[RMDB]
RNA sequence: GGGAACGACUCGAGUAGAGUCGAAAAAAAAUUUCACUAGUUCGUUCUACAAUUACGUAAUGAAGAUAGAUCAUAAAUCACACAAGCCAUUGUUGUCCGAAAUACGAUUCUAUAUAUCUGUAUUGGAUCCUUUGACUAUCGACAACUGGACACGGGACUAGAUAUUAAUAUUCGUAUUAAUAUCUAGAAAAGAAACAACAACAACAAC
Reactivity to 2A3 in 0.01 (KOAc 150mM, MgCl2 10mM, bicine 150mM(pH8.5), 24C), signal-to-noise 2, nucleotides 027 to 156: a010a000a010a010u100u140u070c010a010c000u030a030g110u080u080c000g000u020u030c010u080a250c050a180a200u280u150a080c130g080u110a120a100u170g000a060a100g110a090u150a040g050a050u050c010a030u050a090a090a060u090c080a090c010a000c040a160a070g120c030c020a010u040u110g030u000u010g020u000c050c030g020a040a040a040u050a010c020g020a000u010u000c050u060a070u020a080u020a040u240c030u130g070u000a000u000u080g000g000a010u020c000c040u010u030u020g040a040c030u030a060u120c010g030a050c020a080a020c030u050g000g020a020c030a020c060g070g000g030a000
Reactivity to DMS in 0.01 (KOAc 150mM, MgCl2 10mM, bicine 150mM(pH8.5), 24C), signal-to-noise 2, nucleotides 027 to 156: a080a040a030a130u020u000u020c030a070c030u020a090g040u000u000c030g000u000u010c030u010a120c060a040a110u000u000a030c130g010u020a060a090u000g010a080a120g020a130u000a040g000a100u010c040a090u000a030a060a090u010c060a060c050a080c030a070a110g020c020c020a130u000u000g000u010u000g010u000c010c060g000a120a050a050u010a040c020g010a030u000u020c070u000a080u000a140u000a040u030c060u030g010u000a060u000u010g000g000a110u010c300c010u010u000u000g000a080c070u010a030u000c010g000a090c030a030a070c090u030g000g000a050c030a030c040g010g050g000a150